[RMDB]
RNA sequence: GGGAACGACUCGAGUAGAGUCGAAAAUCUCGCGCAGGAAAAGCAGAAGAAGGUGCUGGUCUUCGUCGAGGAUGUCGCGGCAUCCGGCGGCUAUAUGAUCGCUCUCGCCGGUGACGAGAUCAUUGCCACCGUGGAGGUAUUUCGAUACCUCCACGGUAAAAGAAACAACAACAACAAC
Reactivity to DMS in 0.01 (KOAc 150mM, MgCl2 10mM, bicine 150mM(pH8.5), 24C), signal-to-noise 2, nucleotides 027 to 126: u000c030u010c000g030c080g020c020a120g010g000a050a070a160a130g000c050a110g000a210a080g030a120a060g010g000u000g000c030u020g000g010u000c000u010u020c090g000u000c030g030a250g030g010a020u020g000u010c090g020c140g010g000c000a000u000c020c020g020g030c020g030g000c080u000a080u060a060u040g000a050u000c070g030c030u000c070u030c050g040c020c020g000g000u020g010a090c050g010a020g000a040u010c040a050u010u000g000c080c010
Reactivity to 2A3 in 0.01 (KOAc 150mM, MgCl2 10mM, bicine 150mM(pH8.5), 24C), signal-to-noise 5, nucleotides 027 to 126: u010c000u000c010g000c020g000c010a040g000g110a060a080a120a020g060c050a050g060a180a000g040a080a030g130g050u080g040c070u060g020g000u000c000u100u140c050g030u020c020g050a100g040g010a010u030g020u040c040g020c070g160g000c020a010u020c010c000g060g070c000g010g000c040u040a080u020a040u300g090a080u090c050g000c030u010c020u050c050g010c000c020g010g070u100g010a030c010g010a010g000a020u040c020a060u010u150g080c000c000